[RMDB]
RNA sequence: GGGAACGACUCGAGUAGAGUCGAAAAGGGAGAGAAGGGUGGAUCGGAUGGGAAGAGUAUAUCCUAUGGGAAUCCCCGGGUUCCUCUUAUGUCCAGCCCCUCCCCCGUCCGAGCGAAGGGGGACUCCGAUGAAUAGCUGGUUCGCCAGCUAUUCAUCAAAAGAAACAACAACAACAAC
Reactivity to DMS in 0.01 (KOAc 150mM, MgCl2 10mM, bicine 150mM(pH8.5), 24C), signal-to-noise 1, nucleotides 027 to 126: g000g000g020a040g000a030g000a070a130g010g000g000u010g000g000a050u010c150g010g020a080u000g000g000g010a070a120g030a070g000u010a100u010a030u000c020c000u010a090u010g020g000g020a140a050u000c050c020c110c240g020g010g010u000u000c080c010u020c130u000u000a070u000g000u000c010c010a090g020c020c000c010c000u000c000c020c020c000c020g020u000c030c000g010a050g020c170g000a020a030g010g000g000g000g000a040c110u010c070c080
Reactivity to 2A3 in 0.01 (KOAc 150mM, MgCl2 10mM, bicine 150mM(pH8.5), 24C), signal-to-noise 1, nucleotides 027 to 126: g040g000g000a040g030a000g030a130a080g100g020g030u090g080g080a200u170c100g050g070a070u090g060g070g080a030a060g040a010g110u080a040u020a030u140c010c020u120a200u190g070g030g000a150a170u080c000c000c000c030g040g000g000u050u000c020c010u000c000u090u100a120u130g070u040c000c040a070g070c000c000c000c000u040c000c020c020c000c000g010u000c000c010g080a020g000c110g030a050a060g030g000g020g020g020a030c010u100c050c040